[RMDB]
RNA sequence: GGGAACGACUCGAGUAGAGUCGAAAAACAUUCGCACCGUCUGGUUGCUUUCGAGAUGUAUGAGCGUCGAAGCUUCGAAGGUAGUUUGGAAAGGACUCUCAUCAUGAGAGUCCCUACCGCCUCCUUCGUUGCUAUUAAUGGUUUUCUCGAAGAUCAGCCCUCAAAUCGUAUUCGUACGAUUUGAGGGAAAAGAAACAACAACAACAAC
Reactivity to 2A3 in 0.01 (KOAc 150mM, MgCl2 10mM, bicine 150mM(pH8.5), 24C), signal-to-noise 4, nucleotides 027 to 156: a000c030a090u150u180c090g020c070a080c010c030g090u070c070u090g030g040u080u090g060c000u070u060u010c020g010a030g020a020u080g110u230a120u230g120a070g020c060g090u110c080g100a050a000g010c010u010u010c020g000a000a000g030g020u140a020g000u060u270u300g000g020a020a050a010g000g000a010c000u000c000u010c000a240u030c070a170u300g000a010g000a000g000u000c010c000c000u010a020c000c030g010c000c000u000c000c000u000u000c010g000u000u000g000c000u030a050u080u140a050a100u090g100g000u060u110u060u000c000u000c010g010a000a000g040a050u100c040a020g050
Reactivity to DMS in 0.01 (KOAc 150mM, MgCl2 10mM, bicine 150mM(pH8.5), 24C), signal-to-noise 1, nucleotides 027 to 156: a050c060a200u030u000c000g050c050a300c030c040g000u000c050u010g060g010u000u000g010c010u000u000u000c020g000a040g010a080u000g040u000a120u010g000a060g020c060g020u010c020g000a180a070g010c010u000u000c010g000a000a050g000g010u000a000g010u000u000u000g080g000a050a180a060g020g000a030c000u000c000u000c010a270u000c190a220u000g050a040g000a050g010u000c010c000c000u000a180c010c010g010c150c010u000c000c000u010u000c000g060u000u000g010c000u010a010u010u000a060a020u000g020g000u000u000u000u000c010u000c010g000a000a100g000a110u000c030a230g020